Annotation
Source: RMDB library OK3TST, as collected in RNAgym. The record gives the reactivity of an RNA of 207 nucleotides to 2A3 and DMS. Reactivities are rounded to 0.1 and cut off at 0 and 3. DMS (dimethyl sulfate) methylates the pairing face of unpaired adenines and cytosines.
RNA sequence: GGGAACGACUCGAGUAGAGUCGAAAACAAGACACUAUUGGUGACACAGGAAAGAAGCCAGCUAGCUGGAGUCAGAGUCCUCAGAAUCAGGAAAUGAGAAAACAUUUCCCACAAAAGUUCCAACUUUUCAACACUUCACAUAUGCCAGUGUUGGCUCGAGCAUGUAUGUAUUCGUACAUACAUGCUCAAAAGAAACAACAACAACAAC
Reactivity to 2A3 in 0.01 (KOAc 150mM, MgCl2 10mM, bicine 150mM(pH8.5), 24C), signal-to-noise 6, nucleotides 027 to 156: c040a040a010g090a030c030a000c050u120a080u150u080g030g000u040g060a020c060a030c060a150g150g000a050a040a090g030a050a000g040c020c010a010g020c060u060a030g040c030u020g040g020a010g030u020c030a030g010a020g110u060c020c000u050c050a050g060a090a110u110c030a040g030g030a020a030a010u060g000a050g170a070a100a010a000c010a010u010u010u020c010c050c020a050c030a030a110a010a020g010u080u120c050c020a070a070c120u070u110u100u100c030a040a010c010a020c040u100u130c090a060c060a180u240a080u230g070c100c030a030g020u020g010u070u020g010g000c020u040c060
Reactivity to DMS in 0.01 (KOAc 150mM, MgCl2 10mM, bicine 150mM(pH8.5), 24C), signal-to-noise 2, nucleotides 027 to 156: c070a100a130g020a080c060a060c050u000a120u000u000g070g010u010g010a080c080a120c040a160g000g010a060a090a120g010a130a180g000c020c030a130g050c020u010a070g000c030u000g000g010a120g010u000c040a180g030a180g010u000c040c030u000c070a080g020a090a110u020c060a010g010g050a030a060a080u010g000a120g010a200a100a120a130c050a060u000u000u000c000c000c020a210c080a060a070a040a080g000u000u000c010c020a060a090c030u000u000u010u000c020a020a090c040a020c040u000u000c060a090c110a130u000a100u000g010c020c030a060g040u000g030u000u000g010g010c030u000c060
About this RNA:
Values cover nucleotides 27 to 156. 2A3 adducts were read by reverse transcription with SuperScript II with manganese. The reactions ran in a buffer of 150 mM KOAc, 10 mM MgCl2 and 150 mM bicine (pH 8.5), at 24 C.